[RMDB]
RNA sequence: GGGAACGACUCGAGUAGAGUCGAAAAAAGCAAAAAUGGAUAUGCCGGACAAUUUUUGUACUCUACAUUUCUAAACACAGCCUCUUUUUACGCUAACGUGCAAUGCAUAAACGAUGCAAACGUUAUUAUUCCACCGAAAGCGAGUAUAAAACGCUACACCAAGGACUUUGUUCGCAAAGUCCUUGGUAAAAGAAACAACAACAACAAC
Reactivity to 2A3 in 0.01 (KOAc 150mM, MgCl2 10mM, bicine 150mM(pH8.5), 24C), signal-to-noise 1, nucleotides 027 to 156: a010a000g100c110a120a070a000a020a000u160g000g000a080u140a070u190g060c030c000g070g000a000c000a090a050u010u120u200u200u170g000u080a080c000u010c000u080a000c050a080u130u130u110c100u120a100a130a020c040a000c010a080g100c030c000u060c030u080u120u020u070u120a080c050g010c000u100a080a080c010g000u000g010c110a190a100u070g000c010a000u030a090a210a000c140g010a050u030g000c000a040a040a040c000g000u010u000a000u040u030a030u100u060c130c030a050c070c030g040a100a000a000g010c010g000a040g080u070a070u040a150a100a000a000c030g040c000u070a000c010